[RMDB]
RNA sequence: GGGAACGACUCGAGUAGAGUCGAAAAAGCGCACGGUACGCCGUGCGCAAGAAUCUGUUCGUAGUAUAGCGAAACAGGGUAAUAUAAAGAAAUGUACACUACGAAGCGAGCCUUACGAGGCUCGCAAAAAAGUCUUUAUCGUUCGCGAUAAAGACAACCUCCUCUAUAAGUUCGCUUAUAGAGGAGGAAAAGAAACAACAACAACAAC
Reactivity to 2A3 in 0.01 (KOAc 150mM, MgCl2 10mM, bicine 150mM(pH8.5), 24C), signal-to-noise 1, nucleotides 027 to 156: a000g020c050g010c000a000c000g000g000u030a040c250g000c030c000g000u000g000c060g000c000a000a000g000a000a020u000c030u020g010u000u010c020g000u000a030g030u000a080u130a100g040c000g040a140a040a000c020a080g030g060g080u050a080a160u130a020u100a190a080a010g110a040a070a000u070g070u080a020c030a000c010u080a020c110g030a090a000g050c000g000a020g000c000c000u070u040a080c150g020a010g000g030c010u010c000g000c050a040a030a000a000a000a000g000u000c000u000u020u010a000u000c000g030u010u000c150g010c000g060a000u000a000a000a000g000a000c000a000a000